Structure probing data (2A3 and DMS) for a 177-nucleotide construct. It was measured as part of the RMDB library OK2TRN. Reactivities are given for positions 27 through 126. Reactivities are rounded to 0.1 and cut off at 0 and 3. For DMS, 3,495 sequencing reads were counted.
[RMDB]
RNA sequence: GGGAACGACUCGAGUAGAGUCGAAAACGGACCUGGCACCGCUGUAUGCGCAAGCAUUGGUGGGUUCGGUGUCGAUGACGGCGCAAUGGUGGCUCGAUGCGCGCGAACCGAAGAAGGAAGUGGUGGCCUUACACGUUCGUUUCGACGAACGUGUAAGAAAAGAAACAACAACAACAAC
Reactivity to 2A3 in 0.01 (KOAc 150mM, MgCl2 10mM, bicine 150mM(pH8.5), 24C), signal-to-noise 2, nucleotides 027 to 126: c010g010g010a010c010c060u050g010g010c010a010c070c010g040c030u030g050u140a050u030g010c040g000c060a070a040g020c000a020u010u070g040g010u060g020g070g020u080u010c000g050g020u050g060u060c030g030a110u140g060a050c030g070g000c030g010c050a030a130u210g130g030u040g080g000c040u020c040g060a040u090g010c050g000c020g010c000g000a030a030c020c000g040a080a030g050a050a040g120g030a040a030g010u010g050g040u020g010g030c000
Reactivity to DMS in 0.01 (KOAc 150mM, MgCl2 10mM, bicine 150mM(pH8.5), 24C), signal-to-noise 3, nucleotides 027 to 126: c140g020g000a110c020c010u010g020g030c050a070c040c010g000c070u010g000u000a020u000g010c020g000c300a080a100g020c010a040u010u000g000g000u000g000g010g020u000u010c020g010g000u000g020u000c020g010a080u010g010a170c180g020g010c030g010c070a140a090u000g040g030u000g000g020c050u010c060g000a110u000g000c040g010c080g000c020g010a100a050c040c000g010a060a060g000a090a090g010g010a150a060g020u010g020g020u000g000g000c080